Source: RMDB library OK1LIB, as collected in RNAgym.
An RNA of 177 nucleotides, treated with 2A3 and DMS and read out base by base.
2A3 is a SHAPE reagent: it acylates the 2'-hydroxyl of flexible nucleotides of all four kinds.
For DMS, 1,582 sequencing reads were counted.
The 2A3 profile rests on 764 reads.

RNA sequence: GGGAACGACUCGAGUAGAGUCGAAAAUAUGCGUAUCAAUUGACCAUAACGAUACAGAAUGCUAAUGCACAGCAGAUAAUACAGGCCUUCAAUCAAGCUAUUGAGUUUGCAGCUGGGAUGGGAGCUGCGAUUCGACCGUGUUCGCACGGUCGAAUCGAAAAGAAACAACAACAACAAC
Reactivity to 2A3 in 0.01 (KOAc 150mM, MgCl2 10mM, bicine 150mM(pH8.5), 24C), signal-to-noise 2, nucleotides 027 to 126: u300a020u200g050c010g000u000a010u000c010a050a160u110u040g140a140c000c000a030u000a260a040c040g000a000u010a000c030a000g260a130a040u150g000c010u070a170a000u050g020c020a000c000a110g000c000a020g030a100u020a050a010u180a190c020a000g060g120c010c000u050u170c000a040a190u040c020a110a000g000c030u020a030u140u150g060a120g100u040u020u120g010c030a020g000c000u000g000g120g000a030u080g050g000g010a020g000c000u050g020
Reactivity to DMS in 0.01 (KOAc 150mM, MgCl2 10mM, bicine 150mM(pH8.5), 24C), signal-to-noise 2, nucleotides 027 to 126: u020a050u020g000c120g030u000a030u030c020a110a240u030u010g000a140c050c010a100u020a010a120c140g020a000u000a000c010a180g030a090a050u060g020c060u000a040a070u000g000c060a100c030a140g000c010a020g000a130u000a040a050u050a100c050a030g000g000c060c010u000u050c090a120a060u010c130a130a090g000c030u000a090u000u000g000a030g060u020u000u010g010c000a000g000c000u050g000g000g000a030u020g030g050g000a040g010c020u000g010